[RMDB]
RNA sequence: GGGAACGACUCGAGUAGAGUCGAAAAGGCCCACGUGCCACCUGGCUGUGCGGGGCCCCAUGCACACCCUCACACUCUCGGGGCUGCGGCCAGAGGAUAGUGGCCUUAUGGUCUUCAAGGCCGAAGGGCAUGAGCGAUACUUCGGUAUCGCUCAUGCAAAAGAAACAACAACAACAAC
Reactivity to DMS in 0.01 (KOAc 150mM, MgCl2 10mM, bicine 150mM(pH8.5), 24C), signal-to-noise 2, nucleotides 027 to 126: g000g000c040c010c050a080c150g040u010g030c020c020a130c040c020u000g010g030c030u010g010u020g060c070g020g030g000g010c040c000c000c040a080u000g020c160a100c090a080c030c060c000u000c090a100c130a080c110u000c060u000c160g070g010g000g000c000u000g000c040g000g000c010c000a000g000a180g010g040a080u000a140g000u000g000g010c000c000u010u000a080u000g020g010u010c040u000u000c300a080a080g000g030c010c000g000a100a140g000g000
Reactivity to 2A3 in 0.01 (KOAc 150mM, MgCl2 10mM, bicine 150mM(pH8.5), 24C), signal-to-noise 2, nucleotides 027 to 126: g020g050c100c070c010a040c080g110u160g100c000c000a130c110c020u020g020g050c070u020g010u070g150c110g050g030g130g040c080c040c020c000a010u170g020c230a110c030a100c150c010c030u170c030a070c000a010c020u110c010u040c160g020g000g040g010c030u060g020c050g010g000c000c000a010g000a020g020g030a030u100a170g050u100g010g020c000c010u040u060a200u110g040g030u010c000u090u140c190a090a130g000g000c000c000g020a050a030g080g030
About this RNA:
Chemical mapping of a 177-nucleotide RNA with DMS and 2A3. The RNA was probed in 150 mM KOAc, 10 mM MgCl2 and 150 mM bicine (pH 8.5) at 24 C. As a SHAPE reagent, 2A3 marks flexible, mostly unpaired nucleotides at the ribose 2'-OH. The 2A3 profile rests on 946 reads.